[RMDB]
RNA sequence: GGGAACGACUCGAGUAGAGUCGAAAAUCGCAUGUCCUGUAGCAGGAGGAGCCACGGACAAAACCCCUCAGACACUGGGUUAAGGAAGGAUUUGGCUUUUUCGGCCGGGAGCUUCGGCAGACUCGCCGUAAUGGCGAGAGUUCGCUCUCGCCAUUACAAAAGAAACAACAACAACAAC
Reactivity to 2A3 in 0.01 (KOAc 150mM, MgCl2 10mM, bicine 150mM(pH8.5), 24C), signal-to-noise 4, nucleotides 027 to 126: u080c020g010c080a050u090g040u040c010c010u040g050u090a030g000c030a010g000g060a010g020g030a010g020c030c000a010c020g020g020a010c020a010a100a020a040c030c020c010c010u120c080a140g050a160c050a030c180u080g020g000g020u020u070a060a030g060g040a060a040g030g030a030u120u060u180g030g000c000u000u030u010u020u070c020g000g010c020c020g000g040g000a050g020c050u070u080c020g020g020c000a010g060a100c020u020c110g020c040c040
Reactivity to DMS in 0.01 (KOAc 150mM, MgCl2 10mM, bicine 150mM(pH8.5), 24C), signal-to-noise 6, nucleotides 027 to 126: u000c100g010c110a110u010g010u000c000c000u010g020u000a110g020c030a060g020g010a060g010g010a080g010c020c010a040c100g010g010a240c040a040a110a080a110c050c020c000c120u010c100a110g010a110c190a080c180u010g000g000g020u000u010a060a130g010g000a160a090g000g000a130u000u010u010g020g000c010u000u000u000u000u010c070g010g020c030c040g000g000g000a060g010c070u000u000c060g020g010c040a090g000a110c050u000c080g020c070c070